[RMDB]
RNA sequence: GGGAACGACUCGAGUAGAGUCGAAAAAGCCGCGCGUACGCGCGCGGCAAGCAGAUGAUGAGCUACUCCCGGCUGAAAGAUGAUGAACCACCUACCGGCUGAGGACAGGUGGAUACGUCCACCUGAAAAAUGCAUCUGAGUUCGCUCAGAUGCAUUUAAAAGAAACAACAACAACAAC
Reactivity to 2A3 in 0.01 (KOAc 150mM, MgCl2 10mM, bicine 150mM(pH8.5), 24C), signal-to-noise 2, nucleotides 027 to 126: a010g010c030c020g030c040g030c050g000u010a080c300g000c010g040c010g050c000g140g050c030a000a000g000c020a000g010a080u200g050a050u080g030a060g020c020u060a050c020u050c000c000c000g010g000c000u000g050a030a110a000g090a050u190g010a140u060g050a070a040c040c000a020c020c010u030a050c000c030g070g000c060u090g080a050g080g070a020c060a000g000g000u020g000g000a000u000a010c010g060u000c000c060a000c000c020u000g090a060a050
Reactivity to DMS in 0.01 (KOAc 150mM, MgCl2 10mM, bicine 150mM(pH8.5), 24C), signal-to-noise 1, nucleotides 027 to 126: a060g010c000c000g100c010g060c070g000u000a080c160g000c050g080c090g090c060g000g070c040a000a000g040c080a000g020a090u000g000a040u070g000a050g000c020u000a050c120u040c000c030c000g020g000c060u030g000a020a070a030g000a130u000g000a120u000g020a090a150c120c070a080c020c000u000a110c050c000g000g000c020u020g000a090g060g040a260c000a000g000g010u000g000g000a030u040a020c140g010u020c000c020a000c020c000u010g000a000a000